Conditions: 150 mM KOAc, 10 mM MgCl2 and 150 mM bicine (pH 8.5), 24 C. This 207-nucleotide RNA was probed chemically with 2A3. Reactivities are given for positions 27 through 156. It was measured as part of the RMDB library RNAMAK.

RNA sequence: GGGAACGACUCGAGUAGAGUCGAAAAUCCUAAGUCUCUCCUGAACCGAAACGUUGAAAUUGUCAGUCUCGGAAACGAGACUUGGAUUUAUGGAGUUUCGGCAUGAGGAGAGAUAUGGAAAAACCUAAGAACAUCCCUUCGGGGAUGUUCUUAGGAAGUAAGAUCACGUGUUCGCACGUGAUCUUACAAAAGAAACAACAACAACAAC
Reactivity to 2A3 in 0.01 (KOAc 150mM, MgCl2 10mM, bicine 150mM(pH8.5), 24C), signal-to-noise 1, nucleotides 027 to 156: u030c000c000u000a120a020g020u000c000u000c000u020c000c000u030g090a080a030c000c000g000a000a000a000c000g110u180u170g030a030a110a040u040u040g090u130c000a020g000u000c000u000c000g060g000a060a060a010c000g000a000g030a000c010u020u130g000g000a000u000u190u060a100u100g210g020a120g020u000u000u000c010g000g020c010a020u240g040a000g000g000a000g010a000g010a000u030a060u060g000g020a000a060a080a020a040c000c000u000a000a000g000a000a000c000a000u000c000c010c000u020u080c280g030g000g010g000a000u000g000u010u020c000u000u000a000g000g000a000a000